[RMDB]
RNA sequence: GGGAACGACUCGAGUAGAGUCGAAAACGUUCAUGUCCACCGCGUCGGUCGGACCGCCGCACAGAAUGCCGCGCUGGUAGAACGCGAGCUGUUGGCCGUUGGCCUGGGUGACGCCGAUGUAGUUGCCUGUUGCUGUAACGUUCGCGUUACAGCAACAAAAAGAAACAACAACAACAAC
Reactivity to DMS in 0.01 (KOAc 150mM, MgCl2 10mM, bicine 150mM(pH8.5), 24C), signal-to-noise 2, nucleotides 027 to 126: c090g010u000u000c060a090u010g000u000c030c050a060c100c050g010c070g020u010c040g000g010u000c090g030g010a180c040c050g030c030c060g030c110a110c080a090g000a050a100u000g010c040c010g000c020g020c090u000g000g030u000a030g020a070a060c040g010c000g010a090g020c020u000g020u010u000g000g000c010c040g030u010u010g040g020c000c040u050g010g010g010u000g000a040c050g010c020c070g010a080u010g010u000a080g010u000u020g020c030c030
Reactivity to 2A3 in 0.01 (KOAc 150mM, MgCl2 10mM, bicine 150mM(pH8.5), 24C), signal-to-noise 2, nucleotides 027 to 126: c020g040u140u090c100a070u160g020u000c020c010a010c000c060g000c030g080u110c060g040g130u020c010g000g050a020c020c050g030c000c030g020c040a060c030a100g150a200a120u130g030c000c000g010c000g000c100u060g070g110u070a120g080a250a030c010g000c010g040a070g020c020u080g070u190u130g050g010c060c060g110u140u260g050g010c000c030u050g090g030g030u060g000a000c040g000c020c040g020a020u080g060u090a090g010u050u090g080c000c000
Structure probing data (DMS and 2A3) for a 177-nucleotide construct. The RNA was probed in 150 mM KOAc, 10 mM MgCl2 and 150 mM bicine (pH 8.5) at 24 C. For 2A3, 1,705 sequencing reads were counted. The DMS profile rests on 2,434 reads. The data come from the RNA Mapping Database (RMDB), library OK2TRN. Values cover nucleotides 27 to 126. In probing experiments dimethyl sulfate is read out at A N1 and C N3, which are open when not base-paired.